[RMDB]
RNA sequence: GGGAACGACUCGAGUAGAGUCGAAAAUAAGACCUGGGGGAUUAAGUUCAAUCCACAAAGUUCUUGAACUUAUCAUUGAUUGAAGUGCUGCCUUAAAGCUUUAAAACCAAAAGGCUUAUGAAGUAGGCUAUAAAUAACAUUUCGAUGUUAUUUAUAGAAAAGAAACAACAACAACAAC
Reactivity to 2A3 in 0.01 (KOAc 150mM, MgCl2 10mM, bicine 150mM(pH8.5), 24C), signal-to-noise 1, nucleotides 027 to 126: u080a000a000g080a000c000c030u030g000g000g000g020g030a010u040u080a040a040g000u000u010c020a000a040u020c060c010a080c070a140a210a020g060u110u100c000u060u080g020a010a000c000u010u010a010u100c040a090u060u250g140a090u000u180g090a110a010g060u070g120c030u040g000c000c000u020u060a090a000a010g020c000u060u100u070a120a220a010a040c030c020a080a260a050a070g000g050c000u000u000a090u110g040a060a010g000u070a010g050g050
Reactivity to DMS in 0.01 (KOAc 150mM, MgCl2 10mM, bicine 150mM(pH8.5), 24C), signal-to-noise 5, nucleotides 027 to 126: u000a110a110g010a160c010c010u010g010g020g000g010g010a140u000u000a030a050g010u000u000c010a020a030u000c140c120a090c170a080a100a160g020u000u010c120u000u000g010a030a010c010u000u000a030u000c080a140u000u000g010a080u000u000g010a060a090g010u000g010c060u000g010c040c030u000u000a070a090a050g010c010u000u010u000a030a070a100a120c130c140a040a070a050a040g000g000c010u000u000a030u000g010a050a060g010u000a030g010g000
Structure probing data (2A3 and DMS) for a 177-nucleotide construct. It was measured as part of the RMDB library OK2TRN. Conditions: 150 mM KOAc, 10 mM MgCl2 and 150 mM bicine (pH 8.5), 24 C. Reactivities are rounded to 0.1 and cut off at 0 and 3. The DMS profile rests on 4,836 reads.